[RMDB]
Conditions: 150 mM KOAc, 10 mM MgCl2 and 150 mM bicine (pH 8.5), 24 C. An RNA of 207 nucleotides, treated with DMS and 2A3 and read out base by base. The DMS profile rests on 3,256 reads. 2A3 is a SHAPE reagent: it acylates the 2'-hydroxyl of flexible nucleotides of all four kinds. For DMS the reverse transcriptase was MarathonRT. The data come from the RNA Mapping Database (RMDB), library M2RFPK. The 2A3 profile rests on 5,711 reads.
RNA sequence: GGGAACGACUCGAGUAGAGUCGAAAAUCGAAAUCAUCGGGAGUGAUCCAGAUGACGGUCCUGCCAUCAGACCGCAACGAGAGCAUGUCGCAUCGAAUGGACUCGGGGAGUCGGCAGCUUGCCCCACUAAGGCAGACGUUGUUCGCAACGUCUGCAAGACUCAUGUUAACUUCGGUUAACAUGAGUCAAAAGAAACAACAACAACAAC
Reactivity to DMS in 0.01 (KOAc 150mM, MgCl2 10mM, bicine 150mM(pH8.5), 24C), signal-to-noise 2, nucleotides 027 to 156: u010c030g000a100a150a070u010c000a020u000c010g010g020g020a090g020u000g010a280u000c000c010a070g020a020u000g000a030c000g010g000u000c110c000u010g000c000c040a090u020c130a150g000a040c030c020g040c040a120a110c040g000a070g000a120g010c050a110u000g030u000c040g000c040a150u000c060g010a090a300u000g010g020a110c080u010c060g010g000g070g010a130g020u000c050g030g000c030a080g020c040u000u000g000c030c000c000c000a060c090u000a040a080g020g040c020a020g000a040c010g010u000u000g010u000u000c210g010c060a060a030c010g030u010c000u000g030c010a030a040
Reactivity to 2A3 in 0.01 (KOAc 150mM, MgCl2 10mM, bicine 150mM(pH8.5), 24C), signal-to-noise 5, nucleotides 027 to 156: u050c010g010a020a030a010u020c000a000u010c020g020g020g000a020g050u120g020a100u000c010c010a020g010a010u020g010a020c000g020g000u020c020c030u040g070c030c020a160u170c030a040g030a030c010c010g010c070a040a080c060g030a010g000a020g080c060a120u090g030u080c030g000c060a080u060c080g060a050a050u070g060g040a030c030u020c110g040g000g000g030a070g090u090c000g030g000c000a010g010c030u060u120g030c000c000c000c000a030c040u110a080a050g150g000c000a000g010a010c000g000u010u000g020u050u040c090g020c120a000a000c000g000u000c000u000g000c000a000a000